[RMDB]
RNA sequence: GGGAACGACUCGAGUAGAGUCGAAAAUGCUGUCCGCUCAUCGAUUGCUGCUGCUGCUGUUGCGCCUGUUGCUGCUGCUGGGCGUAUGGCCGGAAGGAGGUUUGAUCCCCGGGCUGCUGGAUCACCGCUAUGCGCUCACCUUCGGGUGAGCGCAUAGAAAAGAAACAACAACAACAAC
Reactivity to 2A3 in 0.01 (KOAc 150mM, MgCl2 10mM, bicine 150mM(pH8.5), 24C), signal-to-noise 2, nucleotides 027 to 126: u140g000c020u020g050u080c040c000g000c040u030c010a060u020c020g240a180u070u100g020c010u000g000c010u020g020c010u000g020c020u060g000u190u150g030c060g000c000c020u100g090u210u040g000c070u030g010c000u000g010c000u000g020g100g000c010g000u040a100u080g050g000c010c020g040g000a130a110g030g020a070g020g040u000u090u160g140a100u070c030c000c010c000g050g000g000c040u000g000c000u000g040g010a020u060c030a030c070c000g010